[RMDB]
RNA sequence: GGGAACGACUCGAGUAGAGUCGAAAAAAUUUUGAUGAUUUCGACGUACGCGCAUACGACGUUUUGAUCGAUAGUUAUUUCGUCUUUGACUAUUAUAAUUUCAUGUUCGGUUCGAACACGAUCAAUUUGGACAACGUUCACAGAUCGCUCAUGUUAACCGAUCCUGGUAUUUCGAUACCAGGAUCGGAAAAGAAACAACAACAACAAC
Reactivity to 2A3 in 0.01 (KOAc 150mM, MgCl2 10mM, bicine 150mM(pH8.5), 24C), signal-to-noise 1, nucleotides 027 to 156: a020a000u300u200u090u130g060a070u080g070a110u050u050u100c000g000a000c020g030u030a020c040g050c000g000c190a020u120a160c110g020a000c050g000u000u000u000u190g030a010u050c060g020a000u140a180g000u060u000a080u040u030u020c060g150u000c060u110u040u070g010a000c040u030a030u180u110a030u050a190a110u000u110u060c170a040u010g020u130u000c090g040g170u010u120c070g040a000a000c000a000c020g050a040u010c000a060a060u300u110u110g100g000a020c000a000a110c150g010u040u010c060a100c110a040g040a030u020c000g000c020u060c100a030u020g010u160u050a040a040
Description: Conditions: 150 mM KOAc, 10 mM MgCl2 and 150 mM bicine (pH 8.5), 24 C. This 207-nucleotide RNA was probed chemically with 2A3. The 2A3 profile rests on 343 reads.